Chemical mapping of a 177-nucleotide RNA with 2A3 and DMS.
For 2A3, 6,608 sequencing reads were counted.
For 2A3 the reverse transcriptase was SuperScript II with manganese.
DMS adducts were read by reverse transcription with MarathonRT.
Reactivities are given for positions 27 through 126.
The RNA was probed in 150 mM KOAc, 10 mM MgCl2 and 150 mM bicine (pH 8.5) at 24 C.
[RMDB]
RNA sequence: GGGAACGACUCGAGUAGAGUCGAAAACGUACGGGCUUCCCGGUCGAGUUGGCGUUGCUUGGACACCUCGAACUUGUCGCAGGCCAGCUCGAGGUCCUUGAUCACCAGGGCCAGCUCGUCGCGCAGCGAGGGUUUUCAUUUUCGAAUGAAAACCCUCAAAAGAAACAACAACAACAAC
Reactivity to 2A3 in 0.01 (KOAc 150mM, MgCl2 10mM, bicine 150mM(pH8.5), 24C), signal-to-noise 4, nucleotides 027 to 126: c010g030u080a010c030g010g020g050c030u090u030c020c000c010g000g040u030c010g000a010g000u010u010g040g020c190g170u110u040g010c020u070u190g100g010a030c020a030c040c060u120c130g070a140a090c050u050u050g010u030c030g010c080a020g000g000c020c000a010g000c010u000c000g000a000g000g000u050c010c000u060u090g080a180u160c060a040c180c030a010g020g000g000c000c000a010g010c000u000c010g000u020c030g000c010g000c060a040g110c030
Reactivity to DMS in 0.01 (KOAc 150mM, MgCl2 10mM, bicine 150mM(pH8.5), 24C), signal-to-noise 5, nucleotides 027 to 126: c040g010u000a040c040g000g000g000c030u000u000c010c010c010g010g020u010c000g000a040g020u000u000g000g010c040g020u010u000g010c020u010u000g040g000a050c060a050c160c050u000c170g010a060a140c120u010u000g000u000c020g010c060a050g010g010c020c020a010g010c000u000c000g000a020g020g000u000c000c000u010u010g020a160u010c220a170c260c080a030g000g000g010c020c020a050g010c000u000c030g010u000c080g020c110g010c180a100g010c260